[RMDB]
RNA sequence: GGGAACGACUCGAGUAGAGUCGAAAACGCUAGUAAUAAUGGAUAUUGGGUUUUAUGAAGAUUGCAGAAUACAGGCAAUUCACUAUGAACGAUUGUUAAUUUUGUUGGUGCAUCCUUGCUCUGUCUACCGUAUACACGUGUUCGCACGUGUAUACGGAAAAGAAACAACAACAACAAC
Reactivity to DMS in 0.01 (KOAc 150mM, MgCl2 10mM, bicine 150mM(pH8.5), 24C), signal-to-noise 2, nucleotides 027 to 126: c080g010c070u020a040g040u030a040a030u020a060a070u000g000g000a030u000a040u000u030g000g000g020u010u000u050u030a010u010g000a130a080g020a050u000u000g010c000a080g010a080a070u060a050c200a060g000g000c030a000a040u000u020c060a100c120u010a070u030g010a050a090c100g010a100u010u000g000u000u020a020a050u010u000u010u000g000u000u000g010g000u000g020c040a070u020c070c110u010u000g000c020u000c040u010g000u000c040u010a080
Reactivity to 2A3 in 0.01 (KOAc 150mM, MgCl2 10mM, bicine 150mM(pH8.5), 24C), signal-to-noise 1, nucleotides 027 to 126: c000g000c000u080a030g070u050a200a000u080a000a000u090g110g060a030u020a080u080u090g000g000g000u000u110u040u000a230u130g000a000a000g000a090u000u190g000c020a020g030a240a030u160a040c110a160g030g000c020a000a000u020u030c040a080c020u040a100u300g020a070a000c000g120a050u040u070g120u070u000a090a180u100u000u060u000g060u020u190g000g000u000g000c000a000u070c010c000u030u020g000c000u010c020u000g040u050c000u000a080
This 177-nucleotide RNA was probed chemically with DMS and 2A3. Values cover nucleotides 27 to 126. 2A3 adducts were read by reverse transcription with SuperScript II with manganese. DMS (dimethyl sulfate) methylates the pairing face of unpaired adenines and cytosines.